RNA sequence: GGGAACGACUCGAGUAGAGUCGAAAAGAGGAUUCAACGAGCUUCGUAGCAACGAUAGCAACGUAGCUUUUGCUACGACCCAAGCUAUCGAGGGCAGCUACGUCCCAUGCUCGAGGGCAGAAUCCGACAGUCGAUGGUGAUUCGUCACCAUCGACUGAAAAGAAACAACAACAACAAC
Reactivity to 2A3 in 0.01 (KOAc 150mM, MgCl2 10mM, bicine 150mM(pH8.5), 24C), signal-to-noise 1, nucleotides 027 to 126: g160a020g000g030a020u000u000c040a030a000c020g000a010g000c010u020u040c040g030u000a000g000c020a050a070c010g020a040u030a020g000c030a050a080c020g040u020a000g000c000u130u190u140u300g000c010u000a000c000g120a110c000c040c010a010a020g000c010u000a000u010c000g000a120g060g100g040c030a030g000c020u010a010c000g020u060c010c030c000a020u130g000c010u000c000g020a140g010g100g000c060a020g000a010a000u000c000c000g010a030
Reactivity to DMS in 0.01 (KOAc 150mM, MgCl2 10mM, bicine 150mM(pH8.5), 24C), signal-to-noise 2, nucleotides 027 to 126: g000a200g000g010a010u000u000c030a080a160c060g020a020g040c000u010u000c020g010u000a000g040c030a130a110c020g000a000u000a000g000c000a090a160c020g010u010a000g030c000u000u000u000u010g010c010u000a000c010g010a100c160c080c220a110a120g020c000u010a010u010c000g010a080g000g020g030c180a130g000c020u010a000c020g000u000c110c110c080a140u010g010c010u000c000g000a010g000g040g030c170a200g000a000a020u000c010c000g000a230

Description
Conditions: 150 mM KOAc, 10 mM MgCl2 and 150 mM bicine (pH 8.5), 24 C. An RNA of 177 nucleotides, treated with 2A3 and DMS and read out base by base. For DMS, 1,374 sequencing reads were counted. The data come from the RNA Mapping Database (RMDB), library OK2TRN. 2A3 adducts were read by reverse transcription with SuperScript II with manganese. High 2A3 reactivity points to a flexible backbone, as in loops and unpaired stretches. The 2A3 profile rests on 2,330 reads.